[RMDB]
RNA sequence: GGGAACGACUCGAGUAGAGUCGAAAAUGCCAUGAUUGUCUGAGGAAGGGAGAAAAAGUCUUUGAAGUGGCUACCAGGAUCCUUUGCAGAUCUCUGGGAUGUCAUUCACUCAUGCUUCUAUGCUGGGCGUACUAUCCUACUUCGGUAGGAUAGUACGAAAAGAAACAACAACAACAAC
Reactivity to 2A3 in 0.01 (KOAc 150mM, MgCl2 10mM, bicine 150mM(pH8.5), 24C), signal-to-noise 2, nucleotides 027 to 126: u100g050c000c000a020u070g010a130u140u140g030u100c060u080g010a040g050g010a020a060g040g060g000a020g030a050a140a020a040a010g110u030c070u040u100u040g040a090a070g050u030g000g020c000u000a020c010c000a000g020g000a010u040c020c020u060u080u300g030c160a040g000a060u000c180u000c000u090g000g000g000a020u100g020u000c000a020u040u000c010a010c000u040c000a020u200g020c010u160u050c040u100a040u140g010c000u000g020g020g010
Reactivity to DMS in 0.01 (KOAc 150mM, MgCl2 10mM, bicine 150mM(pH8.5), 24C), signal-to-noise 3, nucleotides 027 to 126: u020g020c030c010a130u000g000a080u000u010g010u010c070u010g000a060g000g010a080a090g010g000g000a050g010a070a070a070a100a110g010u000c050u000u000u000g000a060a050g020u000g000g010c010u000a300c000c010a010g000g000a020u000c000c020u010u010u010g010c280a100g000a010u000c020u000c010u010g010g000g000a070u000g000u000c010a030u010u000c080a110c010u000c030a020u010g010c020u000u000c100u010a060u010g020c010u010g000g000g020